An RNA of 177 nucleotides, treated with DMS and 2A3 and read out base by base. The reactions ran in a buffer of 150 mM KOAc, 10 mM MgCl2 and 150 mM bicine (pH 8.5), at 24 C. It was measured as part of the RMDB library 15KREP. For 2A3 the reverse transcriptase was SuperScript II with manganese. For DMS, 965 sequencing reads were counted.
RNA sequence: GGGAACGACUCGAGUAGAGUCGAAAAUUCGAUCCGGACCGGCUCAUCUCGGCAAGGGGCGGCAGUCCUCAGUGCUCUUACUCUUUCCUAUAAAGAGGAGACUGCUGGACUCGCCGCCCGAGCCCGACGACAUGUAUGAGUUCGCUCAUACAUGUCGAAAAGAAACAACAACAACAAC
Reactivity to DMS in 0.01 (KOAc 150mM, MgCl2 10mM, bicine 150mM(pH8.5), 24C), signal-to-noise 1, nucleotides 027 to 126: u000u000c080g000a100u000c040c040g030g010a050c130c020g000g000c070u000c050a200u030c040u000c050g010g010c100a080a160g020g000g010g000c010g000g000c030a000g000u000c000c000u000c030a000g020u000g010c070u020c010u010u000a300c010u000c010u000u010u000c260c170u000a120u000a040a010a020g000a010g010g020a010g000a070c030u000g010c290u010g000g000a000c000u010c160g040c010c000g000c000c000c010g010a010g000c010c010c040g010a210
Reactivity to 2A3 in 0.01 (KOAc 150mM, MgCl2 10mM, bicine 150mM(pH8.5), 24C), signal-to-noise 1, nucleotides 027 to 126: u030u010c010g040a030u030c050c040g000g030a040c010c020g030g010c010u010c010a130u050c050u010c030g020g000c030a070a090g050g010g000g000c000g010g020c010a000g000u000c000c010u010c000a040g020u160g190c010u040c000u120u200a260c010u030c000u030u060u020c020c060u140a110u180a300a020a010g000a000g010g010a000g010a000c000u020g010c100u000g000g000a000c000u010c050g000c000c000g010c000c000c000g000a000g000c000c000c010g070a070